RNA sequence: GGGAACGACUCGAGUAGAGUCGAAAAAAAAAGGAACUAUGUUCAGGCAUGAAGCCUCCACGUGCGUGCGAUAGCACCCGGAAACGGCUGAGCAUAGUUCCGAGCUGAAGGAGGCACGGCUCAAAAAGAUAUGUAUUAGCUUCGGCUAAUACAUAUCAAAAGAAACAACAACAACAAC
Reactivity to 2A3 in 0.01 (KOAc 150mM, MgCl2 10mM, bicine 150mM(pH8.5), 24C), signal-to-noise 2, nucleotides 027 to 126: a000a000a000a000a000g010g010a020a010c010u010a000u000g020u000u000c000a010g000g010c000a000u030g050a090a010g000c000c000u000c000c000a050c010g000u000g000c000g000u000g010c010g130a140u150a190g000c010a010c000c000c000g030g000a050a040a020c010g000g010c000u000g000a000g000c000a000u010a000g000u000u010c010c000g000a000g000c010u010g010a140a080g000g000a000g020g020c030a010c000g010g010c000u010c010a060a080a010a000a000
Reactivity to DMS in 0.01 (KOAc 150mM, MgCl2 10mM, bicine 150mM(pH8.5), 24C), signal-to-noise 3, nucleotides 027 to 126: a010a040a060a090a080g000g000a030a010c000u000a000u000g000u000u000c010a010g000g010c000a020u000g000a080a040g000c000c000u000c010c010a300c010g000u010g010c010g050u000g010c010g020a220u020a120g010c000a020c000c010c000g010g000a080a070a110c000g000g000c010u000g010a010g000c000a010u000a010g010u010u000c000c020g010a000g010c000u000g000a040a030g010g040a000g000g000c000a240c020g010g010c010u000c000a070a070a060a090a070
The record gives the reactivity of an RNA of 177 nucleotides to 2A3 and DMS.
Values cover nucleotides 27 to 126.
It was measured as part of the RMDB library M2PK90.
Conditions: 150 mM KOAc, 10 mM MgCl2 and 150 mM bicine (pH 8.5), 24 C.